The record gives the reactivity of an RNA of 207 nucleotides to 2A3. The RNA was probed in 150 mM KOAc, 10 mM MgCl2 and 150 mM bicine (pH 8.5) at 24 C. For 2A3 the reverse transcriptase was SuperScript II with manganese. It was measured as part of the RMDB library OK3TST.
RNA sequence: GGGAACGACUCGAGUAGAGUCGAAAAAAUACUUAUGCAGAAGACCUAUGAUAGCAGUAAGUUUACAGAGCAGAGCUAAGACUUGCAAACCGUGUUGUAUCUGUGUCUUUACUUACUAUGGUUGAGAGGAAAGGAUUUACACGCUGCGUUUGCAACCGCAGCAUAGAGUCUUCGGACUCUAUGCUGCAAAAGAAACAACAACAACAAC
Reactivity to 2A3 in 0.01 (KOAc 150mM, MgCl2 10mM, bicine 150mM(pH8.5), 24C), signal-to-noise 1, nucleotides 027 to 156: a000a000u280a080c090u060u060a060u090g010c020a000g000a180a000g020a080c000c010u010a110u160g100a060u090a060g010c020a010g040u020a010a010g000u150u000u080a210c110a020g010a020g000c040a000g000a000g090c010u090a070a050g040a190c000u030u030g000c000a000a000a090c030c010g020u050g000u090u120g010u090a070u000c010u010g180u010g100u100c000u040u030u000a070c010u000u000a010c040u040a090u300g010g010u020u030g040a030g000a000g070g120a160a000a030g000g040a020u100u030u230a010c030a000c040g000c040u090g020c040g120u040u040u010g020c000a000a040c000c070